[RMDB]
RNA sequence: GGGAACGACUCGAGUAGAGUCGAAAAGCGCUCGAUCAGUGAGCUAUUACGCACUCUUUCAAGGGUGGCUGCUUCUAGGCAAACCUCCUGGCUGUCUCUGCACCCCUACCUCCUUUAUCACUGAGCGAUAACUAGCAGACUUCGGUCUGCUAGUUAUAAAAGAAACAACAACAACAAC
Reactivity to DMS in 0.01 (KOAc 150mM, MgCl2 10mM, bicine 150mM(pH8.5), 24C), signal-to-noise 3, nucleotides 027 to 126: g000c110g020c010u000c030g010a060u040c120a060g010u000g000a030g000c090u000a040u030u000a040c180g000c040a050c020u000c010u000u010u080c260a100a060g000g010g010u000g020g000c040u010g010c030u010u010c060u000a070g010g030c010a040a140a100c020c000u010c010c000u000g000g000c000u010g000u000c030u000c020u020g000c050a110c040c010c040c030u010a030c050c020u000c010c030u000u000u040a050u010c020a030c020u020g020a060g000c010g020
Reactivity to 2A3 in 0.01 (KOAc 150mM, MgCl2 10mM, bicine 150mM(pH8.5), 24C), signal-to-noise 5, nucleotides 027 to 126: g060c050g010c000u020c000g100a180u070c050a030g050u050g130a010g040c040u050a090u110u160a050c110g010c010a020c000u030c000u050u270u160c100a110a080g040g000g020u030g030g050c000u020g020c010u080u060c060u080a050g050g000c010a040a080a100c010c000u020c000c010u010g050g000c020u020g040u070c010u000c020u040g010c020a030c000c010c010c000u010a070c010c000u040c000c010u050u120u040a130u070c030a020c070u060g040a020g020c040g030